[RMDB]
RNA sequence: GGGAACGACUCGAGUAGAGUCGAAAAAAAAAAGAUAUGGAGCGAGGAGACGCUUGGAUUUAUAGGCGAGAUGAGUCGGAAACGACUGAGCCUAUUGUCAGCGUUGACUCGCUCCUAAGUCAAAAAAGUUUUAAUAUUGCUUCGGCAAUAUUAAAACAAAAGAAACAACAACAACAAC
Reactivity to DMS in 0.01 (KOAc 150mM, MgCl2 10mM, bicine 150mM(pH8.5), 24C), signal-to-noise 1, nucleotides 027 to 126: a020a050a020a060a100a060g040a030u000a300u000g000g000a040g000c000g020a030g000g020a300g010a030c000g030c040u000u020g000g030a010u000u000u000a020u000a020g020g000c000g000a250g000a140u000g010a030g000u000c010g000g000a070a060a180c020g010a020c010u000g010a160g020c000c010u000a000u000u000g020u000c000a040g000c020g000u000u000g000a290c000u000c000g010c000u000c000c000u000a000a030g030u030c070a000a030a050a120a080a180